An RNA of 177 nucleotides, treated with DMS and read out base by base. Conditions: 150 mM KOAc, 10 mM MgCl2 and 150 mM bicine (pH 8.5), 24 C.

[RMDB]
RNA sequence: GGGAACGACUCGAGUAGAGUCGAAAAGAUAUGGAGCAGCUACUUCCGAUCACUUGUCAGCGAGUAGGUUCGGAAACGAACCUAGUCGCUUGGAUUUAGUGAGUCGGAAGUAGCUGCUCCUAAGUCACAAGCGUAAUAAGUUCGCUUAUUACGCUUGAAAAGAAACAACAACAACAAC
Reactivity to DMS in 0.01 (KOAc 150mM, MgCl2 10mM, bicine 150mM(pH8.5), 24C), signal-to-noise 3, nucleotides 027 to 126: g000a040u010a300u000g010g010a020g020c010a020g020c000u000a010c010u010u000c000c000g020a100u000c000a010c000u000u000g010u000c020a040g010c000g020a030g000u000a010g000g010u000u000c010g030g000a130a100a220c000g010a010a010c000c000u000a000g000u000c000g010c000u020u000g020g000a020u000u000u000a000g000u000g000a040g000u000c000g000g000a010a000g010u000a000g020c010u000g000c010u000c000c000u000a000a060g000u010c030a280